[RMDB]
RNA sequence: GGGAACGACUCGAGUAGAGUCGAAAAACAAGUGGAAGCUUGCCCGGUUCCUUUCCACUCGACGAAAGAACGCCUCUGGAGACACCAAUGGGGAAAGAAUGAUGCCUGUGGGUGUGGCAGGUUUAAGCAUCGGUACUGCGUUCGCGCAGUACCGAUGAAAAGAAACAACAACAACAAC
Reactivity to DMS in 0.01 (KOAc 150mM, MgCl2 10mM, bicine 150mM(pH8.5), 24C), signal-to-noise 1, nucleotides 027 to 126: a300c050a090a010g000u000g000g040a120a040g000c000u010u000g040c010c010c070g000g010u000u000c010c000u000u000u040c010c040a010c100u040c010g000a150c150g000a120a030a160g000a080a080c040g000c090c010u010c070u030g080g000a190g000a080c010a020c030c000a120a040u000g000g000g000g010a010a000a130g010a210a110u060g000a170u010g090c040c040u000g060u000g000g050g020u000g000u000g010g000c050a070g000g070u040u030u000a120a120g060
Reactivity to 2A3 in 0.01 (KOAc 150mM, MgCl2 10mM, bicine 150mM(pH8.5), 24C), signal-to-noise 2, nucleotides 027 to 126: a040c010a030a020g050u020g020g060a180a000g010c030u020u030g110c050c000c020g030g050u020u080c010c000u010u030u000c000c000a020c020u050c040g210a130c060g060a060a040a080g050a060a000c050g040c020c010u000c020u020g070g000a100g020a050c030a020c000c010a060a180u120g010g010g010g040a020a080a040g060a050a090u250g100a080u110g060c000c000u010g050u080g060g060g020u130g020u040g020g020c030a010g000g000u000u040u120a100a070g090